The record gives the reactivity of an RNA of 177 nucleotides to 2A3. Conditions: 150 mM KOAc, 10 mM MgCl2 and 150 mM bicine (pH 8.5), 24 C. Source: RMDB library OK1LIB, as collected in RNAgym.
RNA sequence: GGGAACGACUCGAGUAGAGUCGAAAAGCAUUGAGAGUCAUCCUUGCAGCAGGGAUACAGGACCAGCUGAUUGACCAGUCUUUGAUUGAACCCUUAGCAGGAGCCCUUGGUCUGAUCUCUGAUUGGCGGUGAUUCUCCGGUUCGCCGGAGAAUCACCAAAAGAAACAACAACAACAAC
Reactivity to 2A3 in 0.01 (KOAc 150mM, MgCl2 10mM, bicine 150mM(pH8.5), 24C), signal-to-noise 2, nucleotides 027 to 126: g040c060a040u110u160g070a120g000a000g100u020c020a040u040c010c020u040u120g100c010a040g060c000a030g000g000g060a020u080a130c010a030g040g100a010c050c000a000g010c010u080g110a190u040u070g120a120c000c000a030g040u090c030u170u120u260g190a240u090u020g060a100a040c000c000c020u050u110a070g010c100a030g100g000a030g030c000c050c000u010u040g000g020u030c030u000g000a000u010c000u000c000u000g000a170u010u090g070g050c050